[RMDB]
RNA sequence: GGGAACGACUCGAGUAGAGUCGAAAAUUGAUCAUUGAUGUAUGCUAAAUUUUGUCCAGUGCUUUUCCGUUUUGUUCAGUUAAUGUAAUGAAUUACAUGAUUGACUUUUUAAAUAGAAACCAAUCUUGCAUUUCUGGUAUAUUGCUAAUUUGGUCAAACCGUAUACUGGCUUCGGCCAGUAUACGGUAAAAGAAACAACAACAACAAC
Reactivity to 2A3 in 0.01 (KOAc 150mM, MgCl2 10mM, bicine 150mM(pH8.5), 24C), signal-to-noise 1, nucleotides 027 to 156: u010u050g000a020u090c020a040u150u060g030a020u060g040u070a020u030g100c090u100a050a050a300u170u210u300u140g030u010c040c010a010g030u020g060c040u010u150u060u000c000c000g090u050u000u100u180g110u060u030c000a000g030u030u120a180a030u030g020u040a080a020u050g150a030a190u090u020a060c010a040u000g020a000u010u010g020a020c000u100u000u080u080u000a070a080a070u130a090g040a050a110a000c040c000a070a070u070c030u060u070g000c000a060u040u040u030c060u010g030g030u040a040u040a000u170u130g020c000u030a000a190u070u020u050g000g010u000c000a100a000
Chemical mapping of a 207-nucleotide RNA with 2A3. The reactions ran in a buffer of 150 mM KOAc, 10 mM MgCl2 and 150 mM bicine (pH 8.5), at 24 C. It was measured as part of the RMDB library OK3TST.